Chemical mapping of a 177-nucleotide RNA with DMS. High DMS reactivity at an A or C suggests that its Watson-Crick edge is free. The reactions ran in a buffer of 150 mM KOAc, 10 mM MgCl2 and 150 mM bicine (pH 8.5), at 24 C. Values cover nucleotides 27 to 126.
[RMDB]
RNA sequence: GGGAACGACUCGAGUAGAGUCGAAAACUGUGGAGCCAGAAGGAGAACAUGGAGAACCAUGUCUGUCUGUAUGUCACCAUGCUCCCUGGCCAUGAUGAUAGCAGACUAAACCUCUGAAACUGCGAGAGCAGCCCUACCAUUUCGAUGGUAGGGCUGCAAAAGAAACAACAACAACAAC
Reactivity to DMS in 0.01 (KOAc 150mM, MgCl2 10mM, bicine 150mM(pH8.5), 24C), signal-to-noise 1, nucleotides 027 to 126: c020u010g030u000g000g000a130g050c170c010a050g020a120a100g020g010a090g000a140a050c020a010u010g020g060a130g000a150a200c050c100a010u000g000u000c080u000g000u000c050u000g000u000a080u000g000u000c020a050c010c000a030u000g000c120u000c090c030c050u010g010g000c180c000a020u020g020a030u010g000a080u000a110g010c000a020g000a080c040u010a020a160a220c060c030u010c020u070g000a100a180a070c090u000g010c040g020a190g000a180